RNA sequence: GGGAACGACUCGAGUAGAGUCGAAAAGUACGUGCUCACAUGCGGAUGAUUACAUCUGAUGUAAUCCCAUGUGUUAUAAGAACGACCUAAGGGAAGUGAGGACAGUGAUUGAGCACGAGAAUCAUGGAGAUGCUUGCUUAUUCGUAAGCAAGCAUCUAAAAGAAACAACAACAACAAC
Reactivity to DMS in 0.01 (KOAc 150mM, MgCl2 10mM, bicine 150mM(pH8.5), 24C), signal-to-noise 4, nucleotides 027 to 126: g000u040a090c000g010u000g000c000u010c000a020c010a010u000g000c120g010g010a140u020g000a050u000u000a010c030a030u000c160u040g010a040u000g000u000a010a000u010c010c000c000a040u000g000u010g010u020u020a070u040a100a080g010a160a030c030g000a240c000c010u000a140a140g020g000g020a070a200g000u000g000a120g000g000a040c070a100g020u000g000a120u020u010g000a010g000c000a000c020g010a110g000a100a090u030c040a060u000g010g010
Reactivity to 2A3 in 0.01 (KOAc 150mM, MgCl2 10mM, bicine 150mM(pH8.5), 24C), signal-to-noise 2, nucleotides 027 to 126: g050u030a060c030g000u000g000c010u010c000a000c000a000u000g060c120g070g020a150u160g000a030u020u030a020c010a000u180c190u280g070a080u030g000u000a000a000u010c000c000c020a010u010g000u000g000u010u010a230u020a000a030g060a010a000c020g020a010c000c000u000a030a010g020g000g000a050a020g000u010g050a020g100g030a020c050a030g010u020g080a030u000u070g000a000g030c000a000c010g000a000g010a000a030u050c020a000u030g000g160
Structure probing data (DMS and 2A3) for a 177-nucleotide construct. It was measured as part of the RMDB library OK1LIB. The reactions ran in a buffer of 150 mM KOAc, 10 mM MgCl2 and 150 mM bicine (pH 8.5), at 24 C. Reactivities are given for positions 27 through 126. For 2A3, 2,521 sequencing reads were counted. For DMS the reverse transcriptase was MarathonRT. For 2A3 the reverse transcriptase was SuperScript II with manganese.